[RMDB]
About this RNA: The data come from the RNA Mapping Database (RMDB), library OK2TRN. Structure probing data (DMS) for a 177-nucleotide construct. In probing experiments dimethyl sulfate is read out at A N1 and C N3, which are open when not base-paired. For DMS, 803 sequencing reads were counted. DMS adducts were read by reverse transcription with MarathonRT.

RNA sequence: GGGAACGACUCGAGUAGAGUCGAAAAGAAGUACUUGGCCUCUGGAUCCUGGAUCCCUAACGGAUCCCGAGCUUAGCCAGGAUCCCGUCGGAUCCGCGUAAGACGCUCUUCGUCGAUGGAUCCAAGCAGAUAGGGUCCUGUUCGCAGGACCCUAUCUAAAAGAAACAACAACAACAAC
Reactivity to DMS in 0.01 (KOAc 150mM, MgCl2 10mM, bicine 150mM(pH8.5), 24C), signal-to-noise 1, nucleotides 027 to 126: g010a190a130g040u000a080c040u000u010g010g050c000c010u000c030u000g000g000a000u000c010c000u010g000g010a040u000c000c010c050u000a180a210c170g010g000a020u000c020c000c070g000a050g030c230u000u010a180g000c020c000a030g000g000a030u000c020c000c020g010u000c210g020g000a000u000c020c010g040c190g000u000a070a150g030a080c030g030c300u000c190u000u010c080g000u000c010g000a090u000g000g030a010u000c000c000a020a110g010c070